This 207-nucleotide RNA was probed chemically with 2A3. The data come from the RNA Mapping Database (RMDB), library ARCHII. The reactions ran in a buffer of 150 mM KOAc, 10 mM MgCl2 and 150 mM bicine (pH 8.5), at 24 C.
RNA sequence: GGGAACGACUCGAGUAGAGUCGAAAAUCAGCAAAGAUGCAACAAUGGGCAAUCCGCAGCCAAGCUCCUGAAGCCUUAUAGGCAAUGGAGAAGGUUCAGAGACUAAAUGGCAGUGGGCCAACUUGUUGGCUUAAGAUAUAGUCCGUCCCAGCUGAAACUCUUCCAGAUUCUUCGGAAUCUGGAAGAGAAAAGAAACAACAACAACAAC
Reactivity to 2A3 in 0.01 (KOAc 150mM, MgCl2 10mM, bicine 150mM(pH8.5), 24C), signal-to-noise 1, nucleotides 027 to 156: u050c030a030g030c040a100a070a020g070a050u160g060c030a020a020c010a090a090u240g010g000g000c030a030a080u000c010c030g030c070a000g000c000c000a030a030g110c040u000c000c000u080g020a160a090g030c000c040u290u270a300u280a160g070g000c000a020a050u060g000g030a010g030a020a010g000g000u000u080c050a020g120a020g030a190c000u060a140a130a000u050g020g000c020a020g020u030g010g000g010c010c010a000a080c030u060u110g020u010u030g050g000c000u050u050a020a020g010a010u070a010u080a120g000u030c050c010g000u020c030c000c000a000g000c030u000g000a020a020a010